The data come from the RNA Mapping Database (RMDB), library OK2TRN. This 177-nucleotide RNA was probed chemically with DMS and 2A3. High DMS reactivity at an A or C suggests that its Watson-Crick edge is free. For DMS the reverse transcriptase was MarathonRT. The 2A3 profile rests on 835 reads.
[RMDB]
RNA sequence: GGGAACGACUCGAGUAGAGUCGAAAAGAGGUGUCUCUGAGCACGCAGGCAGUCGGGAGGUGAGUGGCUGCCGGGCUGCUUCCUCGAUGUGAGGCCAGCUUGUUCUCAGACUGGGAGCCACAGCAGCCAUCGGGCCAAGGUUCGCCUUGGCCCGAUGAAAAGAAACAACAACAACAAC
Reactivity to DMS in 0.01 (KOAc 150mM, MgCl2 10mM, bicine 150mM(pH8.5), 24C), signal-to-noise 1, nucleotides 027 to 126: g020a120g020g010u000g000u000c020u000c060u020g020a110g010c040a050c120g010c070a090g000g000c020a050g040u000c020g000g010g000a110g000g010u000g010a200g000u010g000g000c000u000g010c050c040g000g010g000c010u000g000c040u010u000c020c000u000c040g010a180u010g030u000g000a040g010g020c240c000a040g010c040u020u010g000u000u010c070u000c040a090g000a090c040u000g000g000g000a050g010c030c040a090c060a080g010c040a040g010c070
Reactivity to 2A3 in 0.01 (KOAc 150mM, MgCl2 10mM, bicine 150mM(pH8.5), 24C), signal-to-noise 1, nucleotides 027 to 126: g100a050g010g020u030g100u020c020u000c010u130g070a090g000c010a000c080g070c090a050g010g030c000a020g020u050c030g000g110g050a120g030g090u230g100a080g020u190g000g000c040u010g010c020c020g000g040g020c000u060g000c000u060u030c010c010u000c010g040a090u250g220u210g180a020g000g030c020c000a030g000c010u070u200g060u200u020c080u000c020a050g040a200c000u000g000g020g000a010g060c000c030a070c010a030g010c000a010g010c010